RNA sequence: GGGAACGACUCGAGUAGAGUCGAAAACGAGUGCAAUAAAGACGCGGUUGCCGAUCGGUAUGGAUGCCACCGUGACGGCUCAAUCUCACAAGUGCCAACGAUAACGAGGCGCUCGCUAUUGCUGCGUAAAAGCGACGAUCGUUCGCGAUCGUCGCAAGCGGUAGGGGUUGUUCGCAACCCCUACCGCAAAAGAAACAACAACAACAAC
Reactivity to 2A3 in 0.01 (KOAc 150mM, MgCl2 10mM, bicine 150mM(pH8.5), 24C), signal-to-noise 1, nucleotides 027 to 156: c050g020a030g030u120g000c070a120a100u010a150a190a000g110a050c010g000c000g050g000u020u140g030c040c070g090a120u040c040g000g100u100a160u070g030g140a090u150g010c000c090a040c040c000g000u010g070a120c030g030g000c000u000c070a040a040u030c010u000c000a040c010a010a040g030u000g040c010c000a040a070c070g120a150u090a300a050c060g000a090g010g000c000g040c000u000c010g000c000u050a060u080u230g010c010u040g020c010g030u060a000a110a130a000g000c000g000a010c000g000a000u000c000g000u050u020c070g010c010g050a000u000c020g010u030c000g010c000a000a000

About this RNA: Conditions: 150 mM KOAc, 10 mM MgCl2 and 150 mM bicine (pH 8.5), 24 C. Chemical mapping of a 207-nucleotide RNA with 2A3. For 2A3, 440 sequencing reads were counted. 2A3 adducts were read by reverse transcription with SuperScript II with manganese.